Source: RMDB library OK3TST, as collected in RNAgym. Chemical mapping of a 207-nucleotide RNA with 2A3. Conditions: 150 mM KOAc, 10 mM MgCl2 and 150 mM bicine (pH 8.5), 24 C.
RNA sequence: GGGAACGACUCGAGUAGAGUCGAAAACGACCUGCACGAGUGCGUGCAGGUCGAAGCCAGUGGUGACACUGGCAAGCACGUCAACUAUAAGCGCCCAUUAUAGUACAAACACAUAAAGCCCCGAUAUGUGUAGACGUGCAAGGGCGAACGGGGCAAACGAUGGAUAUCACUUCGGUGAUAUCCAUCGAAAAGAAACAACAACAACAAC
Reactivity to 2A3 in 0.01 (KOAc 150mM, MgCl2 10mM, bicine 150mM(pH8.5), 24C), signal-to-noise 1, nucleotides 027 to 156: c010g010a000c000c000u000g010c010a010c010g110a140g300u300g110c090g000u020g000c030a030g010g000u000c000g000a000a010g020c000c000a000g000u010g000g000u040g000a000c000a000c000u010g000g020c000a010a030g010c000a000c010g000u010c010a060a010c010u000a020u030a050a010g060c020g210c070c000c030a030u000u000a020u010a000g020u090a060c100a020a270a000c000a050c000a020u030a010a130a000g010c020c000c000c030g000a030u010a020u070g000u000g020u020a040g000a000c000g000u010g010c010a060a100g200g030g030c120g020a100a010c020g030g000g000g000c010a020a020a020